[RMDB]
RNA sequence: GGGAACGACUCGAGUAGAGUCGAAAAUGUAGCUGGUUGCAGGAAGGCCCCAGCAGAAGGGGGCUUUGAUGAGCAUCCACCUUGUGUACCGAGUGAAUGUCCGUCCAGAUGAGGUGCGGAUGCAGCUGACAAUGGAGGCGACUGUAAUGGACUAUCCUGUACGACAUAGUUUCGACUAUGUCGUACAAAAAGAAACAACAACAACAAC
Reactivity to 2A3 in 0.01 (KOAc 150mM, MgCl2 10mM, bicine 150mM(pH8.5), 24C), signal-to-noise 3, nucleotides 027 to 156: u250g010u060a000g020c010u030g030g030u040u040g070c030a010g010g050a030a000g040g000c000c000c000c020a020g020c080a060g200a070a100g070g000g010g010g000c020u010u010u040g180a170u040g010a010g040c020a020u060c010c000a030c010c010u060u070g050u010g000u080a080c020c100g020a030g010u060g090a150a060u050g040u020c010c000g000u030c020c020a050g020a240u080g040a100g010g010u120g010c040g000g010a000u010g000c020a020g030c030u030g040a070c000a090a050u080g050g010a000g000g040c050g010a020c010u070g040u150a060a070u110g000g040a000c020u040a030u160c020c030
Reactivity to DMS in 0.01 (KOAc 150mM, MgCl2 10mM, bicine 150mM(pH8.5), 24C), signal-to-noise 1, nucleotides 027 to 156: u020g030u000a090g040c050u010g000g030u000u000g010c030a110g000g040a040a120g000g050c020c010c010c020a160g020c030a200g010a190a300g000g000g020g030g010c020u000u010u000g020a090u000g010a120g010c000a050u010c000c010a040c050c010u000u000g080u000g000u000a110c100c030g010a080g010u000g000a000a040u000g000u010c020c020g000u010c020c000a120g020a120u000g010a100g020g000u010g000c060g020g010a120u010g000c000a020g000c050u000g010a100c050a140a080u000g000g020a070g030g020c010g000a060c050u000g000u030a090a110u010g000g020a100c030u000a110u000c030c060

This 207-nucleotide RNA was probed chemically with 2A3 and DMS. For DMS, 2,945 sequencing reads were counted. The reactions ran in a buffer of 150 mM KOAc, 10 mM MgCl2 and 150 mM bicine (pH 8.5), at 24 C. Source: RMDB library OK3TST, as collected in RNAgym. Reactivities are given for positions 27 through 156.